[RMDB]
RNA sequence: GGGAACGACUCGAGUAGAGUCGAAAAGAAGCACGGCUUGUGUGUGAUCCUUUUGGAUUGCACUGUAUAUCCUACGCUGUGCGAAUGUAGGUCCAUUGUGGCGAGAGCCACUUACAGUACAGCUUAUUAUGACGCAUCGCUGUACGAACGAUGCAGAAUCAUCGUGGGCGUUCGCGCCCACGAUGAUAAAAGAAACAACAACAACAAC
Reactivity to 2A3 in 0.01 (KOAc 150mM, MgCl2 10mM, bicine 150mM(pH8.5), 24C), signal-to-noise 1, nucleotides 027 to 156: g080a000a010g000c000a020c010g090g020c090u040u050g080u030g000u000g000u000g270a000u000c000c000u080u200u300u300g020g000a000u000u000g000c000a000c000u020g020u080a160u060a000u210c000c000u080a040c130g020c020u000g000u000g000c000g000a000a000u040g000u020a000g020g200u000c060c100a120u000u080g000u000g000g000c000g000a040g000a000g000c000c000a050c000u000u020a050c000a000g000u000a000c000a000g030c020u070u130a070u160u060a160u300g140a170c070g000c060a040u010c080g000c020u010g010u100a070c000g000a210a060c040g000a000u000g010c020a000g010a050
Source information
The data come from the RNA Mapping Database (RMDB), library OK3TST. An RNA of 207 nucleotides, treated with 2A3 and read out base by base. The RNA was probed in 150 mM KOAc, 10 mM MgCl2 and 150 mM bicine (pH 8.5) at 24 C. For 2A3 the reverse transcriptase was SuperScript II with manganese. Reactivities are given for positions 27 through 156.